[RMDB]
RNA sequence: GGGAACGACUCGAGUAGAGUCGAAAAGAUAUGGAAAGGUCGAACUACCUCGAGAUUGGUCGGAAACGACCAAUCAGUGAAAGAGGCGACCCUUUCCUAAGUCAAAAGUGAGUCUUCGGACUCACAACCACUAAGAAUGCUUCGGCAUUCUUAGUGGAAAAGAAACAACAACAACAAC
Reactivity to 2A3 in 0.01 (KOAc 150mM, MgCl2 10mM, bicine 150mM(pH8.5), 24C), signal-to-noise 1, nucleotides 027 to 126: g000a000u000a030u070g010g000a000a000a000g010g010u010c000g010a070a040c070u210a130c210c010u010c040g030a040g030a030u000u010g000g000u020c000g000g000a020a030a010c010g000a020c000c000a010a000u000c000a000g000u070g120a090a040a040g000a000g020g000c010g000a020c040c010c010u010u010u000c010c000u010a020a000g000u000c020a000a050a180a080g020u020g010a000g000u030c010u040u120c300g140g000a000c000u000c000a000c000a010a020
Reactivity to DMS in 0.01 (KOAc 150mM, MgCl2 10mM, bicine 150mM(pH8.5), 24C), signal-to-noise 2, nucleotides 027 to 126: g010a010u010a040u010g000g000a000a000a020g000g030u000c020g020a070a070c100u010a300c020c000u000c000g020a300g010a020u000u000g010g000u000c000g000g000a010a020a010c000g020a020c000c000a010a000u000c000a130g040u020g020a210a100a240g010a000g010g000c000g030a030c100c070c120u000u000u000c000c000u000a000a190g000u000c000a130a140a040a190g000u000g000a000g000u000c000u000u020c240g050g010a040c000u000c000a000c000a020a160